[RMDB]
RNA sequence: GGGAACGACUCGAGUAGAGUCGAAAAAUUCUGACACUGUCUCCGCACUACAAGUUAUGGCUGGCUAGGGGAUUGUGGUGGAUCCAAUAUUUUAUAGCUAGGACCGAGGCUGUGCUGCAUGUCUAUAUGACUCCUACGGAUUCGUCCGUAGGAGUCAAAAAGAAACAACAACAACAAC
Reactivity to DMS in 0.01 (KOAc 150mM, MgCl2 10mM, bicine 150mM(pH8.5), 24C), signal-to-noise 1, nucleotides 027 to 126: a210u000u000c020u000g000a090c050a030c030u000g030u000c030u000c010c010g000c110a100c060u000a080c110a080a120g040u000u010a060u010g000g020c080u000g010g020c090u000a140g000g040g000g030a080u020u020g030u000g030g020u000g010g010a030u000c000c040a070a110u000a070u000u000u000u000a090u010a070g010c040u000a080g030g000a040c060c010g000a060g000g000c080u000g000u000g030c080u010g000c080a030u000g030u000c020u000a100u020a120